[RMDB]
RNA sequence: GGGAACGACUCGAGUAGAGUCGAAAAUGUAGAGGGACCAACAGCGCUGUCCGAUAAUGCUAGUAUUGUAAGUCUGUUUAGCACCACUAUUUUGCUGCUGGACAGAGUUGAGCAGGGCUAUGACUACACAGUGUUUGUUUACAUUAGUCAGCAAAUACAAACCCUCUCGAUUCGUCGAGAGGGUUUGAAAAGAAACAACAACAACAAC
Reactivity to 2A3 in 0.01 (KOAc 150mM, MgCl2 10mM, bicine 150mM(pH8.5), 24C), signal-to-noise 1, nucleotides 027 to 156: u140g040u060a000g030a030g100g000g050a100c070c010a020a080c050a010g000c030g000c040u010g040u000c010c010g000a030u030a050a020u170g040c040u030a010g100u060a180u110u040g020u250a100a130g060u010c000u000g040u010u080u080a000g010c010a030c010c000a030c070u130a170u200u160u080u150g030c010u000g000c000u000g000g000a020c010a000g020a010g000u030u040g060a020g070c070a060g070g000g060c000u000a010u150g070a040c000u070a020c010a000c050a030g000u000g000u130u210u000g000u000u080u050a030c030a060u000u100a010g030u010c000a000g020c010a010a030a030u050a100
Reactivity to DMS in 0.01 (KOAc 150mM, MgCl2 10mM, bicine 150mM(pH8.5), 24C), signal-to-noise 1, nucleotides 027 to 156: u000g010u000a060g000a160g010g000g010a160c050c010a090a140c040a050g010c010g010c000u010g010u030c060c010g000a080u010a050a050u000g000c090u000a120g000u000a080u000u000g030u000a050a120g030u000c020u000g010u000u000u000a040g010c060a040c060c050a100c190u000a200u000u000u000u000g070c020u020g000c010u000g040g020a030c040a030g010a090g020u000u010g000a100g040c060a040g000g010g000c020u000a070u000g000a090c020u000a050c030a060c020a090g040u000g020u000u000u010g010u000u000u000a110c060a070u010u000a070g010u010c050a030g030c060a020a070a110u010a170
Structure probing data (2A3 and DMS) for a 207-nucleotide construct. For 2A3 the reverse transcriptase was SuperScript II with manganese. The 2A3 profile rests on 567 reads.